[RMDB]
RNA sequence: GGGAACGACUCGAGUAGAGUCGAAAAUAAUAUUCUUUUUUCCAUCUUUUGCCUUUGCGGCAACACCAGUAACACCAUAUUAUGGUCCAGGACAUAUCACCUUUGAUUGGUGCGGGUUUGGUGAUAGUAGAUCUGAUUGUACCAAUCCUAGUUCACCUCCUUAUGACCAAUUCGUUGGUCAUAAGGAAAAAGAAACAACAACAACAAC
Reactivity to 2A3 in 0.01 (KOAc 150mM, MgCl2 10mM, bicine 150mM(pH8.5), 24C), signal-to-noise 4, nucleotides 027 to 156: u100a000a110u100a100u230u160c120u080u110u030u010u040u020c030c030a090u070c120u080u140u140u040g010c010c030u140u180u300g100c080g040g030c030a020a000c010a010c020c040a040g050u120a080a010c030a040c070c020a040u070a130u260u150a090u180g030g010u020c040c060a040g040g010a020c040a060u090a040u100c020a040c010c000u060u110u210g070a020u010u050g010g030u030g010c050g050g060g000u000u100u070g010g010u000g020a020u030a030g110u070a020g020a090u060c040u070g040a100u050u160g050u010a020c000c010a030a000u000c010c030u060a060g060u070u080c020a010c050c050
Reactivity to DMS in 0.01 (KOAc 150mM, MgCl2 10mM, bicine 150mM(pH8.5), 24C), signal-to-noise 2, nucleotides 027 to 156: u010a080a080u000a130u000u000c030u010u010u000u000u010u020c020c030a210u010c060u030u000u000u000g010c000c010u000u000u000g000c140g000g020c010a040a080c050a070c030c000a100g030u010a090a080c030a050c010c010a070u000a080u010u000a070u010g020g020u010c040c040a130g010g020a060c030a180u010a090u010c020a040c020c000u000u000u010g020a120u000u000g000g010u010g000c050g010g010g010u000u030u000g020g020u010g000a080u000a090g040u030a090g010a130u000c070u000g010a100u000u010g050u000a240c020c020a010a110u000c040c050u000a100g020u010u000c020a050c040c030